[RMDB]
RNA sequence: GGGAACGACUCGAGUAGAGUCGAAAAUAUGUAGUAGCCCAUUUCCACUAUGUUCUAUCAAUGGGAGCAGUGUUUGCUAUCAUAGCAGGAUUUGUUCACUGAUUCCCAUUAUUUUCAGGCUUCACCCAGUAUCACCUCCAUUCGUGGAGGUGAUACUAAAAGAAACAACAACAACAAC
Reactivity to DMS in 0.01 (KOAc 150mM, MgCl2 10mM, bicine 150mM(pH8.5), 24C), signal-to-noise 2, nucleotides 027 to 126: u010a020u000g000u020a080g010u010a050g000c030c030c050a120u000u000u000c040c040a090c170u020a100u000g000u000u000c070u000a070u010c140a000a010u000g000g000g010a010g000c010a010g010u000g010u000u000u000g010c010u000a170u030c220a170u000a040g020c040a060g010g010a190u000u010u010g000u010u000c000a010c020u000g000a140u010u000c010c000c000a020u000u000a030u000u010u010u000c120a090g000g010c020u000u000c040a120c060c040c100
Reactivity to 2A3 in 0.01 (KOAc 150mM, MgCl2 10mM, bicine 150mM(pH8.5), 24C), signal-to-noise 1, nucleotides 027 to 126: u120a030u080g100u030a130g000u020a020g010c040c000c010a020u020u040u000c030c020a090c070u110a100u230g130u270u060c060u110a120u060c050a010a000u020g000g000g000a010g000c000a010g010u000g050u050u180u070g040c020u040a120u260c050a150u170a050g020c000a010g030g130a090u090u130u170g050u090u090c010a010c020u060g020a200u050u070c060c000c060a000u000u000a000u000u000u010u120c040a030g000g000c000u030u020c000a030c060c040c000
This 177-nucleotide RNA was probed chemically with DMS and 2A3. The DMS profile rests on 1,676 reads. The reactions ran in a buffer of 150 mM KOAc, 10 mM MgCl2 and 150 mM bicine (pH 8.5), at 24 C. Source: RMDB library OK2TST, as collected in RNAgym.